Notes
The record gives the reactivity of an RNA of 177 nucleotides to 2A3 and DMS. The data come from the RNA Mapping Database (RMDB), library M2PK50.
RNA sequence: GGGAACGACUCGAGUAGAGUCGAAAAGACUACCAGUUCGCUGGUAGUCAAAGGGAAAGGGGAAGGCGGCGGCGUCCGCCGUAACAAACGCAAAAAGAAAAAAAAGACGAAGCUUCGGCUUCGUCAACACAUUUACCUUGUUCGCAAGGUAAAUGUGAAAAGAAACAACAACAACAAC
Reactivity to 2A3 in 0.01 (KOAc 150mM, MgCl2 10mM, bicine 150mM(pH8.5), 24C), signal-to-noise 3, nucleotides 027 to 126: g010a000c000u000a000c000c000a010g010u030u070c180g050c100u010g000g000u000a010g000u000c010a000a010a030g020g000g010a100a070a020g010g000g000g010a000a070g030g000c020g000g000c020g040g000c010g110u220c010c000g000c000c010g000u000a000a000c000a020a010a000c010g000c040a000a010a020a050a090g160a110a040a020a010a000a000a010a010g010a000c000g000a000a010g010c010u060u120c210g050g000c000u000u000c000g030u000c000a000a010
Reactivity to DMS in 0.01 (KOAc 150mM, MgCl2 10mM, bicine 150mM(pH8.5), 24C), signal-to-noise 4, nucleotides 027 to 126: g000a010c000u000a010c000c000a000g010u000u010c270g010c000u020g000g020u000a000g010u000c000a010a100a190g000g010g010a030a030a050g000g010g010g000a210a110g010g010c000g000g010c010g010g020c020g000u010c010c010g020c000c000g020u020a000a190c110a010a020a010c020g000c010a030a100a060a100a100g020a020a020a020a070a070a100a150a180g010a010c000g010a010a010g010c000u000u010c220g030g010c000u000u000c000g000u010c000a020a060
About this RNA: Reactivities are given for positions 27 through 126.